[RMDB]
RNA sequence: GGGAACGACUCGAGUAGAGUCGAAAAGAUAUGGAUGGAACUACAUCCACUCUAGAGCGUUGAAAUCGGAAACGAUGGAGCUCUAGGAGAUGCCAUCCUAAGUCAAACUAUCUCUUCGGAGAUAGAACGUCAUUAAACUCUUCGGAGUUUAAUGACGAAAAGAAACAACAACAACAAC
Reactivity to 2A3 in 0.01 (KOAc 150mM, MgCl2 10mM, bicine 150mM(pH8.5), 24C), signal-to-noise 1, nucleotides 027 to 126: g010a000u100a070u230g030g010a000u010g040g010a060a020c080u150a070c300a000u000c040c040a170c000u080c000u010a010g010a000g000c010g210u300u060g070a050a020a010u010c000g000g060a060a090a040c010g000a010u000g030g020a030g000c010u000c020u020a000g000g030a080g000a010u010g010c010c000a000u000c000c000u020a130a000g070u030c030a070a030a090c010u010a000u000c010u000c000u050u080c300g140g000a000g000a010u000a000g040a050a020
Reactivity to DMS in 0.01 (KOAc 150mM, MgCl2 10mM, bicine 150mM(pH8.5), 24C), signal-to-noise 2, nucleotides 027 to 126: g020a060u000a300u040g000g000a000u000g000g010a110a020c120u010a300c010a000u000c010c030a080c050u000c000u000a020g030a000g000c040g060u020u090g000a130a180a030u000c010g020g000a160a160a250c040g020a010u000g000g000a070g020c000u000c000u000a000g030g000a220g000a030u000g020c000c000a010u000c000c000u000a080a030g000u000c010a080a060a200c010u000a000u000c000u000c000u000u010c160g020g020a000g000a030u000a030g000a030a070